Source: RMDB library M2PK90, as collected in RNAgym. The record gives the reactivity of an RNA of 177 nucleotides to DMS and 2A3. Reactivities are given for positions 27 through 126. For DMS, 3,602 sequencing reads were counted. The 2A3 profile rests on 7,910 reads. For 2A3 the reverse transcriptase was SuperScript II with manganese.

RNA sequence: GGGAACGACUCGAGUAGAGUCGAAAAUCAAAGAGCGUCGCACACACGCAGACUAAGUCUGCUGCAUGCAGAGCCUAAACCGCAGGCUCUGUGUGCGAGAUAUCGAUCAAAAUGCAUGCAGAAAAAACUAACGUAAUGACUUCGGUCAUUACGUUAGAAAAGAAACAACAACAACAAC
Reactivity to DMS in 0.01 (KOAc 150mM, MgCl2 10mM, bicine 150mM(pH8.5), 24C), signal-to-noise 4, nucleotides 027 to 126: u000c140a060a070a140g030a070g020c100g010u000c020g000c000a000c000a010c020a110c200g000c010a010g010a010c020u010a130a190g010u000c000u000g010c000u000g000c000a010u000g010c000a010g000a010g010c000c000u010a050a100a200c100c090g020c180a020g000g000c010u000c010u000g020u000g010u000g010c000g000a020g010a110u020a120u020c060g000a070u000c080a050a020a030a070u000g000c010a020u000g000c010a080g020a010a060a020a080a070a120
Reactivity to 2A3 in 0.01 (KOAc 150mM, MgCl2 10mM, bicine 150mM(pH8.5), 24C), signal-to-noise 4, nucleotides 027 to 126: u160c050a070a080a010g100a030g060c060g070u020c010g000c000a010c000a000c000a000c030g010c010a000g000a000c040u220a260a030g020u000c000u000g000c010u020g000c000a000u010g000c010a010g010a000g020c010c000u090a180a080a070c040c050g100c170a010g000g010c010u000c020u010g000u000g000u010g000c010g010a000g000a010u200a020u120c070g050a020u090c070a020a060a030a000u040g000c000a000u010g000c000a030g130a070a050a010a010a000a020